[RMDB]
RNA sequence: GGGAACGACUCGAGUAGAGUCGAAAAGAUAUGGAGGAGGGAAUGCUGAUGACCUAAGUACAGUCGGAAACGACCGAGGCUUAGCAAGGCACUCUCCUCCUAAGUCAAAGUGCUGUUCGCAGCACAACUCUGCUCAAUGGUUCGCCAUUGAGCAGAGAAAAGAAACAACAACAACAAC
Reactivity to 2A3 in 0.01 (KOAc 150mM, MgCl2 10mM, bicine 150mM(pH8.5), 24C), signal-to-noise 2, nucleotides 027 to 126: g020a000u070a040u220g020g010a020g000g020a010g000g040g040a290a300u090g000c000u020g010a300u090g020a070c000c000u010a020a000g000u030a000c000a020g000u020c010g010g060a070a050a010c020g010a010c020c000g040a070g020g010c000u000u000a000g000c010a080a290g020g000c050a010c020u010c000u000c010c000u000c000c000u000a000a010g000u000c000a090a040a000g000u000g010c020u000g060u030u080c290g030c220a000g000c000a000c000a020a010
Reactivity to DMS in 0.01 (KOAc 150mM, MgCl2 10mM, bicine 150mM(pH8.5), 24C), signal-to-noise 2, nucleotides 027 to 126: g010a060u000a300u010g000g000a010g000g000a040g000g000g010a050a070u000g030c010u000g000a090u000g010a120c300c000u000a000a010g010u000a000c010a010g000u000c020g000g000a050a090a150c010g020a000c000c020g020a200g000g030c000u040u000a000g020c070a070a060g010g010c010a110c010u000c010u010c000c000u000c000c000u000a030a040g000u010c070a070a100a140g000u000g010c000u000g010u000u010c230g000c020a020g050c000a010c010a090a060
Structure probing data (2A3 and DMS) for a 177-nucleotide construct. The 2A3 profile rests on 2,639 reads. It was measured as part of the RMDB library TTRDEL. DMS adducts were read by reverse transcription with MarathonRT. For 2A3 the reverse transcriptase was SuperScript II with manganese. The reactions ran in a buffer of 150 mM KOAc, 10 mM MgCl2 and 150 mM bicine (pH 8.5), at 24 C. For DMS, 1,235 sequencing reads were counted.